[RMDB]
RNA sequence: GGGAACGACUCGAGUAGAGUCGAAAAGGAACGGUUCUAUUGGUCUUCAUGGUCUCGCUGUGGAUCAUCGCAUCGUGGACGCUGCGUCAGUGCGAAAGAUUUCAUGAUGAAGAACACGCGAAUCUUACGGAGUCGAUAAUUUCGAUUAUCGACUCCGAAAAGAAACAACAACAACAAC
Reactivity to DMS in 0.01 (KOAc 150mM, MgCl2 10mM, bicine 150mM(pH8.5), 24C), signal-to-noise 2, nucleotides 027 to 126: g080g000a070a080c160g000g000u000u000c040u000a120u000u000g010g010u010c040u000u010c020a080u020g000g000u000c050u000c060g030c100u000g020u010g000g000a060u000c030a130u000c060g020c040a020u020c070g040u010g000g000a070c040g000c200u000g010c050g010u000c020a170g030u000g000c030g000a060a110a060g030a050u000u010u010c030a030u010g000a050u000g000a070a020g000a030a060c050a070c110g000c130g010a050a070u000c020u000u010a280
Reactivity to 2A3 in 0.01 (KOAc 150mM, MgCl2 10mM, bicine 150mM(pH8.5), 24C), signal-to-noise 2, nucleotides 027 to 126: g150g060a050a080c050g030g010u000u000c010u060a080u050u090g050g020u010c000u060u040c030a000u070g070g000u050c030u040c110g050c110u120g000u030g030g000a100u010c010a000u030c020g000c020a010u030c070g260u090g220g040a010c080g040c250u150g020c000g060u010c020a030g080u060g100c000g000a030a060a030g030a000u050u040u050c020a030u080g030a010u030g010a030a080g000a010a020c040a020c080g000c010g030a070a030u040c010u010u020a000